[RMDB]
RNA sequence: GGGAACGACUCGAGUAGAGUCGAAAAGAUAUGGAGCUUGCGAGAACUUUCCCACGUUGAAAUAGCUCGCUUCGGAAACGAAGCGAGCUAUGGAGUGGGAGGGUUCGAUGAGCAAGCUCCUAAGUCAGUUUACGUAUAAGUUCGCUUAUACGUAAACAAAAGAAACAACAACAACAAC
Reactivity to DMS in 0.01 (KOAc 150mM, MgCl2 10mM, bicine 150mM(pH8.5), 24C), signal-to-noise 3, nucleotides 027 to 126: g000a070u000a300u010g000g000a000g030c000u000u000g000c000g010a260g010a010a020c000u000u010u000c000c000c000a010c000g010u000u010g010a180a170a010u000a010g000c030u000c000g020c000u030u010c000g000g000a110a110a210c000g020a030a000g010c000g010a000g000c010u000a010u000g020g020a050g010u010g010g000g010a010g010g020g000u000u000c010g010a090u010g010a300g010c000a010a010g010c010u000c000c000u000a010a050g010u000c060a130
Reactivity to 2A3 in 0.01 (KOAc 150mM, MgCl2 10mM, bicine 150mM(pH8.5), 24C), signal-to-noise 2, nucleotides 027 to 126: g020a040u130a070u200g010g000a000g020c000u000u020g000c000g030a270g000a090a010c010u030u010u010c010c030c010a020c010g250u300u080g020a050a050a010u000a000g000c010u040c010g000c000u030u010c020g100g070a130a130a110c040g000a010a000g040c030g000a000g030c000u000a000u000g000g000a000g000u030g000g040g000a020g000g020g010u010u020c030g020a010u030g000a040g030c000a000a000g030c010u000c000c000u020a020a000g020u000c020a000
Source information: Structure probing data (DMS and 2A3) for a 177-nucleotide construct. For DMS the reverse transcriptase was MarathonRT. The DMS profile rests on 3,957 reads. The data come from the RNA Mapping Database (RMDB), library TTRINS.